[RMDB]
RNA sequence: GGGAACGACUCGAGUAGAGUCGAAAAACGGGGGGAAAUCGACCGGGUCCCGCAGAACCCGAUGGAGUCCCCCGCCAUCCCCUGACGGAGAAAACUGGUCCCGAUAGGGGCACCCACAAUAGGAUGGACAAUCUAAUUACUUCGGUAAUUAGAUUGUAAAAGAAACAACAACAACAAC
Reactivity to 2A3 in 0.01 (KOAc 150mM, MgCl2 10mM, bicine 150mM(pH8.5), 24C), signal-to-noise 1, nucleotides 027 to 126: a010c000g000g000g000g000g000g000a000a000a080u010c000g000a000c000c000g020g000g010u040c140c070c010g040c040a050g040a040a010c000c000c000g010a020u050g030g050a010g030u000c010c020c000c030c000g000c000c010a020u060c010c000c000c010u020g040a020c000g030g030a030g060a140a170a080a070c070u150g250g030u020c010c000c020g000a020u130a130g000g020g000g030c000a070c010c020c000a050c040a020a180u100a090g160g030a060u120g040g010
Reactivity to DMS in 0.01 (KOAc 150mM, MgCl2 10mM, bicine 150mM(pH8.5), 24C), signal-to-noise 2, nucleotides 027 to 126: a210c040g020g040g000g000g030g000a060a080a100u000c020g000a040c020c020g000g010g010u000c050c060c300g000c170a130g000a080a040c010c010c000g030a010u010g000g000a030g010u000c000c000c000c000c000g010c030c020a100u010c000c000c000c050u000g010a200c170g000g010a130g000a040a050a110a140c130u000g020g010u000c000c020c020g030a150u000a080g010g000g000g030c160a020c000c000c000a090c150a090a060u000a070g000g000a060u000g000g000